[RMDB]
RNA sequence: GGGAACGACUCGAGUAGAGUCGAAAAUUGAAGGCCUACCGUAACAAACCUCGAAUCCGGAGGCUGCGCGAGGCACAUCGGAGGCUAAGCGCCGGCCGGCGAUGCGACUACGACCUAGAGUUCAUAAGAGACGUAGUCUACUAGCUAGGUCAUACGCCCUACCUAGCGACUUCGGUCGCUAGGUAGGAAAAGAAACAACAACAACAAC
Reactivity to 2A3 in 0.01 (KOAc 150mM, MgCl2 10mM, bicine 150mM(pH8.5), 24C), signal-to-noise 1, nucleotides 027 to 156: u120u090g020a050a040g000g000c000c000u020a020c090c000g020u080a190a140c040a200a040a030c020c020u120c050g020a080a060u050c080c000g100g000a020g000g000c000u000g000c000g000c000g000a050g000g070c000a000c000a200u270c200g070g010a210g010g030c000u090a030a030g040c040g090c060c000g010g000c000c030g000g000c030g070a000u050g080c070g000a000c000u000a000c030g040a110c020c000u070a020g000a010g260u090u000c120a130u210a300a060g050a000g020a130c020g070u020a000g070u040c000u100a230c000u000a000g030c010u010a020g000g000u000c000a000u000a020c050g030c000